The record gives the reactivity of an RNA of 177 nucleotides to 2A3 and DMS.
RNA sequence: GGGAACGACUCGAGUAGAGUCGAAAACUAGAGCGUUGCGGAUCACCCAUAGGAAUUCUAGAGAUGGUAUGCUUGUCACGAGAGUCGUUAAGCACGCUAAGUUGGGCGUGACUAUAAACGAUAAGGAGCUCUAUGAUCAGUUCGCUGAUCAUAGAGCAAAAGAAACAACAACAACAAC
Reactivity to 2A3 in 0.01 (KOAc 150mM, MgCl2 10mM, bicine 150mM(pH8.5), 24C), signal-to-noise 1, nucleotides 027 to 126: c010u010a000g020a030g010c060g000u070u190g000c050g010g010a040u070c040a040c040c020c010a000u040a030g160g010a060a130u130u010c030u080a080g000a000g040a130u070g020g030u110a010u130g030c000u080u110g100u080c000a040c120g160a050g000a020g110u040c000g030u020u030a000a010g000c010a000c060g000c010u060a080a010g220u090u100g050g020g010c020g000u000g010a000c010u000a000u110a110a020a050c010g040a010u010a230a020g150g040a100
Reactivity to DMS in 0.01 (KOAc 150mM, MgCl2 10mM, bicine 150mM(pH8.5), 24C), signal-to-noise 2, nucleotides 027 to 126: c050u010a110g000a070g020c100g020u010u000g020c050g010g010a040u000c080a090c060c040c020a120u000a070g000g010a080a080u000u000c060u000a070g020a110g010a040u000g010g020u000a060u000g010c050u000u010g030u010c040a060c060g010a190g000a150g020u010c010g010u000u000a070a020g010c010a010c010g000c000u000a030a110g010u000u020g050g010g000c020g000u010g010a080c010u000a050u010a100a070a070c040g000a050u010a090a070g000g000a190

2A3 adducts were read by reverse transcription with SuperScript II with manganese. The reactions ran in a buffer of 150 mM KOAc, 10 mM MgCl2 and 150 mM bicine (pH 8.5), at 24 C. The 2A3 profile rests on 735 reads. Source: RMDB library OK2TST, as collected in RNAgym.